[RMDB]
RNA sequence: GGGAACGACUCGAGUAGAGUCGAAAAGCGAACGACAACGGAUGAUUUGCUGCGGACGAUGUACUACGUACAGCAUCUUCAGUGGCAGACUCUGUGCCAAGUUUUAUUCAUUGUGCCGCUUCAAUGGCAUCGCAUAGGUGUUCGCACCUAUGCGAUGAAAAGAAACAACAACAACAAC
Reactivity to DMS in 0.01 (KOAc 150mM, MgCl2 10mM, bicine 150mM(pH8.5), 24C), signal-to-noise 4, nucleotides 027 to 126: g020c020g010a060a050c080g000a070c110a090a040c010g010g000a010u010g000a120u000u000u000g000c010u000g030c000g010g000a010c040g010a010u000g010u000a120c140u040a160c300g010u010a090c160a120g000c050a030u010c010u000u000c000a030g030u010g020g000c040a030g000a010c030u010c020u010g010u000g000c050c080a100a060g010u010u000u030u010a100u000u020c010a040u000u000g010u000g000c050c000g010c030u000u030c090a040a050u010g010g000
Reactivity to 2A3 in 0.01 (KOAc 150mM, MgCl2 10mM, bicine 150mM(pH8.5), 24C), signal-to-noise 7, nucleotides 027 to 126: g020c020g060a050a070c050g100a070c070a120a010c030g010g000a010u030g110a150u030u000u040g000c000u000g010c000g010g010a010c030g000a020u030g000u060a100c070u070a040c200g170u080a090c070a100g020c000a020u010c000u020u020c020a040g000u040g020g000c010a000g020a040c010u000c000u020g020u020g070c050c030a070a050g000u010u030u060u120a160u050u080c030a020u010u030g020u020g080c020c010g020c020u060u050c040a050a040u040g020g000
Structure probing data (DMS and 2A3) for a 177-nucleotide construct. 2A3 is a SHAPE reagent: it acylates the 2'-hydroxyl of flexible nucleotides of all four kinds. The DMS profile rests on 8,359 reads. The reactions ran in a buffer of 150 mM KOAc, 10 mM MgCl2 and 150 mM bicine (pH 8.5), at 24 C. DMS adducts were read by reverse transcription with MarathonRT. It was measured as part of the RMDB library OK1LIB.